[RMDB]
RNA sequence: GGGAACGACUCGAGUAGAGUCGAAAAUAGAAUGGAUGAAACUAUUGAUCUCAUCUGUGAUGUGAAUAGGUUGGGAAAGUAUGUGAAGGAAGAACCUUGUCGAGAAAUUUUGGCAUUGACACCUACAUGGUUCUAUACUAUUCGUAGUAUAGAACCAAAAAGAAACAACAACAACAAC
Reactivity to DMS in 0.01 (KOAc 150mM, MgCl2 10mM, bicine 150mM(pH8.5), 24C), signal-to-noise 9, nucleotides 027 to 126: u010a050g010a210a070u010g010g010a050u000g000a080a080a120c050u000a090u010u010g010a140u000c060u000c010a040u010c040u000g010u000g010a100u000g010u000g010a070a070u010a050g010g010u010u000g000g010g010a080a070a060g010u000a040u010g010u010g000a080a070g000g010a100a080g010a080a090c040c030u000u000g010u000c040g010a080g010a070a070a140u000u000u000u000g010g010c030a040u000u000g000a080c120a060c050c020u000a050c170a120
Reactivity to 2A3 in 0.01 (KOAc 150mM, MgCl2 10mM, bicine 150mM(pH8.5), 24C), signal-to-noise 3, nucleotides 027 to 126: u100a010g080a060a010u050g030g070a020u030g050a020a110a030c060u070a110u190u210g080a090u040c030u000c020a030u000c030u020g070u040g030a070u050g050u030g040a060a070u050a080g020g070u050u070g050g010g000a040a060a050g040u060a060u130g070u020g030a040a020g000g000a050a070g000a050a030c000c010u000u030g030u040c020g000a010g070a080a180a110u120u170u060u030g000g030c010a000u030u010g040a040c040a040c060c020u170a070c040a160